[RMDB]
RNA sequence: GGGAACGACUCGAGUAGAGUCGAAAAGGAAAUUAGAUUCAGAUGAUAUCAUGAGAGUGUGGUCCUCAUGAUGGGAUUAGCACUCCUAUAAAAAGAGAAGGAGACUAGAGCUUACUCUCUGCUGUGUGAGGAUAUGGUGAGAAGAUACUGUCAACAACCAUGGCAUGACUUUCGAGUCAUGCCAUGGAAAAGAAACAACAACAACAAC
Reactivity to 2A3 in 0.01 (KOAc 150mM, MgCl2 10mM, bicine 150mM(pH8.5), 24C), signal-to-noise 2, nucleotides 027 to 156: g070g040a100a110a050u240u210a150g020a040u100u030c080a030g030a090u090g030a020u050a050u120c090a040u150g020a060g000a020g120u020g040u010g030g010u020c000c000u070c040a060u190g010a090u090g020g000g000a000u060u030a070g040c000a010c020u020c000c000u050a050u040a010a170a000a010a000g070a000g040a040a060g010g050a010g010a020c040u100a040g000a030g060c020u000u090a020c020u020c010u000c030u040g080c000u030g040u000g040u060g090a020g000g010a020u030a000u190g070g030u000g000a020g010a050a000g070a060u190a110c090u180g060u210c010a000a000c030a030a000
The record gives the reactivity of an RNA of 207 nucleotides to 2A3.
2A3 adducts were read by reverse transcription with SuperScript II with manganese.
Values are in units of 0.01, from 0 to 300, in steps of 10.
Reactivities are given for positions 27 through 156.
The RNA was probed in 150 mM KOAc, 10 mM MgCl2 and 150 mM bicine (pH 8.5) at 24 C.